Overview: Chemical mapping of a 177-nucleotide RNA with 2A3 and DMS. It was measured as part of the RMDB library OK1LIB.
RNA sequence: GGGAACGACUCGAGUAGAGUCGAAAAGCCAGAACGACUUGCUGACAUUCAUUUAACAAAACAGCAGUUAAAUCUUGAAGGUGGCAUUGUUGUUGCUAAUCCAAUUCCAUAUGAGCAUGCCUUAUCAGUGAAGGACUCUAUUCGUAGAGUCCUUCACAAAAGAAACAACAACAACAAC
Reactivity to 2A3 in 0.01 (KOAc 150mM, MgCl2 10mM, bicine 150mM(pH8.5), 24C), signal-to-noise 2, nucleotides 027 to 126: g030c010c010a000g000a000a130c070g010a000c020u030u170g000c030u010g070a170c060a200u030u080c050a100u000u060u140a140a040c200a090a130a070a070c000a000g130c000a040g010u090u210a070a000a000u060c070u230u240g040a170a050g000g050u060g000g000c040a000u020u040g100u000u020g000u000u000g090c160u100a050a000u010c020c100a040a160u000u080c000c020a010u000a090u300g000a060g000c040a040u110g020c000c000u080u100a160u230c070a000
Reactivity to DMS in 0.01 (KOAc 150mM, MgCl2 10mM, bicine 150mM(pH8.5), 24C), signal-to-noise 2, nucleotides 027 to 126: g020c120c090a000g000a100a010c300g000a040c190u060u020g000c000u000g000a160c070a040u010u040c160a080u000u070u010a020a130c140a030a000a160a080c080a040g000c030a060g040u000u000a000a060a000u050c080u020u000g010a120a020g000g010u000g000g040c000a060u000u000g020u000u000g000u000u000g020c060u000a090a060u020c020c080a060a230u020u020c090c100a080u000a000u000g000a060g010c080a030u020g010c030c020u000u010a060u000c020a090